This 207-nucleotide RNA was probed chemically with 2A3.

RNA sequence: GGGAACGACUCGAGUAGAGUCGAAAAACACGUACUCGAGUGUGAGAGAGUGAUCUCUCUCGAACACUCUCACGAGUUCGUACGUUCGUGAUCUCGUACUCACGAGUUCGAGUGAGAUCUCUCUCGUACACUCUCUCGAUCACUCGUGAGUGAGAACUGACACCGUUGGAUUCGUCCAACGGUGUCAAAAAGAAACAACAACAACAAC
Reactivity to 2A3 in 0.01 (KOAc 150mM, MgCl2 10mM, bicine 150mM(pH8.5), 24C), signal-to-noise 1, nucleotides 027 to 156: a010c120a010c020g050u130a080c000u070c080g000a000g010u040g010u080g010a050g000a000g000a000g040u020g220a080u040c100u000c000u010c000u000c010g000a000a000c110a040c040u020c020u020c020a090c000g000a000g000u060u120c150g040u120a070c070g000u000u150c100g070u080g070a030u000c100u000c050g020u010a070c040u040c110a000c100g020a000g030u000u000c000g000a010g010u000g020a020g000a030u000c010u020c000u010c000u000c020g060u100a000c000a000c000u000c000u020c000u050c040g070a070u260c040a000c040u000c000g020u060g050a040g040u020g010a000g100a000a010c040